[RMDB]
RNA sequence: GGGAACGACUCGAGUAGAGUCGAAAAGCUGGAGCGUGAGGCCUGCCUGGCCUCCAACUACGCGCUGGCCAAGGAGAACCUGGCCCUGCGGCCCCGCCUGGAGAUGGGCCGGGCUGCCCUGGCCAUAUCCUGAGUAUCACUUCGGUGAUACUCAGGAAAAAGAAACAACAACAACAAC
Reactivity to DMS in 0.01 (KOAc 150mM, MgCl2 10mM, bicine 150mM(pH8.5), 24C), signal-to-noise 3, nucleotides 027 to 126: g000c040u010g020g010a070g010c100g020u000g020a030g010g010c010c020u000g020c200c220u020g000g010c000c010u000c010c200a070a080c120u010a050c080g010c050g000c100u010g010g000c010c020a040a060g000g000a130g020a060a090c050c000u000g000g010c000c000c040u020g000c110g010g010c000c030c070c120g000c040c060u000g020g000a110g000a160u000g010g010g030c000c100g000g000g010c040u010g000c010c050c040u000g000g000c000c010a040u010a050
Reactivity to 2A3 in 0.01 (KOAc 150mM, MgCl2 10mM, bicine 150mM(pH8.5), 24C), signal-to-noise 1, nucleotides 027 to 126: g070c040u070g040g020a040g070c030g030u120g050a020g000g000c000c050u090g160c050c150u070g000g010c000c000u000c010c000a060a020c010u120a010c050g010c020g020c090u040g000g000c000c030a050a090g070g020a080g010a070a050c000c010u020g000g000c010c030c000u050g050c040g030g000c010c000c030c060g100c020c060u120g100g070a300g000a140u150g020g010g020c000c000g010g000g000c030u070g010c040c000c020u030g000g010c000c000a010u050a010
Structure probing data (DMS and 2A3) for a 177-nucleotide construct. For DMS, 2,702 sequencing reads were counted. The data come from the RNA Mapping Database (RMDB), library OK2TRN. DMS adducts were read by reverse transcription with MarathonRT. For 2A3, 1,820 sequencing reads were counted.